[RMDB]
RNA sequence: GGGAACGACUCGAGUAGAGUCGAAAAGUAUGGAUGCCACCGUGACGGCUCAAUCACAUAAGUGCCAACGAUAACGAGGCGCUCGCUAUUGCUGCGUAACUGACGGCCUGACGGUCUGACGUUACAAAAAACGAAAAGUGGUUCGCCACUUUUCGAACUGGAGCAAAUUCUUCGGAAUUUGCUCCAGAAAAGAAACAACAACAACAAC
Reactivity to 2A3 in 0.01 (KOAc 150mM, MgCl2 10mM, bicine 150mM(pH8.5), 24C), signal-to-noise 1, nucleotides 027 to 156: g110u130a030u160g010g030a030u040g030c030c010a050c090c220g050u070g050a040c060g010g000c000u000c060a060a110u090c000a060c050a180u210a140a000g030u040g110c000c000a080a140c070g120a050u030a080a130c110g030a130g050g030c020g000c130u050c010g000c020u090a020u290u220g040c060u040g020c070g010u000a010a030c020u010g010a000c010g020g030c000c010u150g130a150c160g030g000u000c000u000g010a000c020g000u000u040a000c020a010a020a000a000a000a000c000g030a000a000a000a000g000u000g020g000u110u050c100g030c020c000a000c000u020u020u000u000c000g000a050a000

Source information: Chemical mapping of a 207-nucleotide RNA with 2A3. Reactivities are given for positions 27 through 156. The RNA was probed in 150 mM KOAc, 10 mM MgCl2 and 150 mM bicine (pH 8.5) at 24 C. The 2A3 profile rests on 415 reads.